Structure probing data (DMS and 2A3) for a 207-nucleotide construct. DMS (dimethyl sulfate) methylates the pairing face of unpaired adenines and cytosines. The DMS profile rests on 6,728 reads. For DMS the reverse transcriptase was MarathonRT. The data come from the RNA Mapping Database (RMDB), library OK3TST. 2A3 is a SHAPE reagent: it acylates the 2'-hydroxyl of flexible nucleotides of all four kinds. Conditions: 150 mM KOAc, 10 mM MgCl2 and 150 mM bicine (pH 8.5), 24 C.
RNA sequence: GGGAACGACUCGAGUAGAGUCGAAAACCAAUGGGAAACCAUUGGCAACUCGGAAACGAGUUGAACCGGGAAUUAGCGUGAAAACCGGCGACAAUGCGAUUUUAAGCAUUGUCGAUUACGCCCAUGUCGAUUUUAAGACAUGGAGCGAAUCACGCAAGGAACUAUGACCGUUCGCGGUCGUGGUUCCAAAAGAAACAACAACAACAAC
Reactivity to DMS in 0.01 (KOAc 150mM, MgCl2 10mM, bicine 150mM(pH8.5), 24C), signal-to-noise 3, nucleotides 027 to 156: c000c000a000a020u000g000g010g000a170a130a270c000c010a010u000u000g000g000c000a010a030c000u000c000g000g000a130a090a230c010g010a030g010u000u000g020a070a120c010c010g020g000g000a160a130u000u000a110g060c010g000u000g000a040a050a120a200c040c010g010g020c010g000a020c000a000a000u000g010c010g000a260u000u000u000u000a130a300g000c000a010u000u000g010u010c000g000a100u000u000a050c000g050c000c000c000a010u000g010u000c000g020a250u000u010u010u010a100a240g000a000c000a000u010g000g010a030g020c000g010a050a150u000c000a020c000g020c020a200a300
Reactivity to 2A3 in 0.01 (KOAc 150mM, MgCl2 10mM, bicine 150mM(pH8.5), 24C), signal-to-noise 6, nucleotides 027 to 156: c000c000a000a000u000g000g000g020a040a050a030c000c000a000u000u000g000g000c000a000a000c000u000c000g010g020a070a050a040c010g000a000g000u000u000g010a050a030c000c000g000g000g020a070a180u120u070a070g000c000g000u000g000a000a000a010a040c000c000g000g000c000g000a000c000a000a000u000g010c020g120a170u010u060u110u300a120a010g000c000a000u000u000g000u000c000g000a000u000u010a040c000g000c000c000c000a000u000g010u000c020g060a130u030u090u100u300a100a020g000a000c000a000u000g000g000a010g000c000g000a010a020u000c000a000c000g000c000a000a030